[RMDB]
Conditions: 150 mM KOAc, 10 mM MgCl2 and 150 mM bicine (pH 8.5), 24 C. Chemical mapping of a 177-nucleotide RNA with DMS and 2A3. For 2A3, 6,576 sequencing reads were counted. For 2A3 the reverse transcriptase was SuperScript II with manganese.
RNA sequence: GGGAACGACUCGAGUAGAGUCGAAAACAUGCAAGCCAGGUGAGGUCUGCGCGAUUCCGCAGGUGCGCGCCACCUACAAGCUGAUUUUCUGGAUCGUGGCCGUGCUGGUCCUGGUCGCGCUUGGAUACACGUCAUUUACUUUCGAGUAAAUGACGUGAAAAGAAACAACAACAACAAC
Reactivity to DMS in 0.01 (KOAc 150mM, MgCl2 10mM, bicine 150mM(pH8.5), 24C), signal-to-noise 5, nucleotides 027 to 126: c060a080u010g020c050a120a150g000c050c040a060g010g020u000g000a130g020g010u000c050u000g010c020g010c070g000a110u010u000c080c080g010c060a180g010g000u010g000c020g010c170g020c020c080a020c010c050u010a120c120a070a110g010c240u000g000a080u000u000u010u010c080u000g000g000a070u000c180g010u000g000g000c020c040g020u000g010c030u000g010g010u010c030c020u000g000g010u000c080g000c120g000c060u000u000g010g000a150u020a190
Reactivity to 2A3 in 0.01 (KOAc 150mM, MgCl2 10mM, bicine 150mM(pH8.5), 24C), signal-to-noise 2, nucleotides 027 to 126: c020a010u100g020c030a070a060g010c000c000a020g030g040u090g050a070g030g090u010c050u060g030c030g000c020g070a100u180u060c030c010g000c040a020g000g040u020g020c080g040c040g000c040c000a000c000c000u060a040c040a060a030g050c090u060g120a210u120u090u120u070c090u090g060g030a050u080c030g010u030g060g030c040c010g010u060g010c030u080g010g040u050c000c010u030g030g020u020c030g000c000g000c050u030u060g060g000a070u110a110